[RMDB]
RNA sequence: GGGAACGACUCGAGUAGAGUCGAAAAACAGCGCGUCUUUGUAGAGCGGACGAAAGCUCUGGCUUCGGGCCCGCUCUCAAGGGUAGCAGACGAUCGAGAGAGGGUCCUCUCGAGAGCUGGGCCAUACGCGGGUUUCUAGGUUCGCCUGGGAACCCGCAAAAGAAACAACAACAACAAC
Reactivity to 2A3 in 0.01 (KOAc 150mM, MgCl2 10mM, bicine 150mM(pH8.5), 24C), signal-to-noise 4, nucleotides 027 to 126: a000c000a010g010c030g000c010g020u000c010u000u010u040g030u120a010g000a000g000c000g000g010a000c010g080a100a030a020g000c000u030c120u150g230g020c000u000u000c000g050g020g010c020c000c000g000c000u000c000u010c000a000a010g010g000g000u070a050g040c010a010g050a040c030g040a070u020c010g000a000g000a010g010a060g040g130g060u080c030c000u000c000u000c000g020a020g010a000g000c000u020g010g060g010c030c010a040u050a070c090
Reactivity to DMS in 0.01 (KOAc 150mM, MgCl2 10mM, bicine 150mM(pH8.5), 24C), signal-to-noise 3, nucleotides 027 to 126: a070c010a020g000c010g010c020g010u000c000u000u000u010g000u050a010g000a000g020c000g010g010a080c010g010a040a040a060g000c010u000c250u040g000g010c000u000u000c020g010g000g030c110c010c000g040c000u000c000u000c010a010a010g000g010g000u000a060g010c060a090g000a100c120g010a140u010c000g000a020g000a030g000a130g020g010g000u030c100c010u010c010u000c010g000a040g010a130g000c010u000g020g020g000c050c010a090u030a050c180
Conditions: 150 mM KOAc, 10 mM MgCl2 and 150 mM bicine (pH 8.5), 24 C. Chemical mapping of a 177-nucleotide RNA with 2A3 and DMS. The 2A3 profile rests on 5,962 reads. It was measured as part of the RMDB library OK1LIB. For DMS, 8,242 sequencing reads were counted.